Record summary
Conditions: 150 mM KOAc, 10 mM MgCl2 and 150 mM bicine (pH 8.5), 24 C. Chemical mapping of a 177-nucleotide RNA with DMS and 2A3. Values are in units of 0.01, from 0 to 300, in steps of 10. Source: RMDB library OK2TST, as collected in RNAgym.
[RMDB]
RNA sequence: GGGAACGACUCGAGUAGAGUCGAAAAGGUGGCAGCCCUCAUUCAUGCUGGCGUCAGGCGAGUGGUGCUAGGAAUCAGACACCCAUUGGCGCACCUCCGGGGCAAGGCUGUGCGCGCGCUCAGGAGCAGACGGCAGAUAAUUCGUUAUCUGCCGUCUAAAAGAAACAACAACAACAAC
Reactivity to DMS in 0.01 (KOAc 150mM, MgCl2 10mM, bicine 150mM(pH8.5), 24C), signal-to-noise 2, nucleotides 027 to 126: g020g000u000g010g010c030a050g000c000c000c030u000c020a070u010u000c110a080u010g020c040u000g030g000c050g020u010c030a040g020g010c020g010a090g010u000g020g000u000g010c010u000a130g030g030a100a110u010c130a070g000a140c100a080c020c030c070a140u000u010g010g070c000g010c030a140c180c010u000c020c020g030g010g010g000c050a090a100g020g000c040u010g020u010g000c100g060c030g010c220g020c010u000c050a070g010g000a080g010c220
Reactivity to 2A3 in 0.01 (KOAc 150mM, MgCl2 10mM, bicine 150mM(pH8.5), 24C), signal-to-noise 2, nucleotides 027 to 126: g050g000u030g010g020c020a030g060c000c050c000u060c040a110u110u110c050a060u240g000c010u040g070g000c000g030u030c010a030g050g030c030g060a040g020u160g010g000u010g000c020u040a080g040g220a100a130u180c040a030g080a130c010a020c020c030c000a010u010u090g020g000c030g030c020a010c000c040u000c020c020g000g000g000g000c050a050a040g130g000c040u100g110u130g100c080g060c010g010c030g000c060u000c000a010g020g000a010g020c010